Structure probing data (DMS) for a 177-nucleotide construct. Source: RMDB library TTRINS, as collected in RNAgym. Values are in units of 0.01, from 0 to 300, in steps of 10. Conditions: 150 mM KOAc, 10 mM MgCl2 and 150 mM bicine (pH 8.5), 24 C. For DMS the reverse transcriptase was MarathonRT.
RNA sequence: GGGAACGACUCGAGUAGAGUCGAAAAGAUAUGGAAGGAGAGGCUAGAGGGAGCUCUGGGAGAGGCAAUAUAUCGGAAACGAUAUAUGCCUUCAGAGCGAAGAACUCUAGCCUCUCCUUCCUAAGUCGUAUCGGUUAUAGUUCGCUAUAACCGAUACAAAAGAAACAACAACAACAAC
Reactivity to DMS in 0.01 (KOAc 150mM, MgCl2 10mM, bicine 150mM(pH8.5), 24C), signal-to-noise 2, nucleotides 027 to 126: g010a100u010a300u000g010g010a020a000g010g010a020g030a030g020g010c010u010a000g020a000g000g000g000a120g010c000u000c000u010g000g000g000a300g010a000g000g000c000a020a060u000a000u000a000u000c000g000g000a200a140a230c000g010a020u000a010u000a000u000g000c010c010u000u000c010a020g000a020g010c000g020a060a120g040a120a190c010u000c000u000a010g000c000c010u010c000u010c000c000u000u000c000c010u000a010a060g010u020c120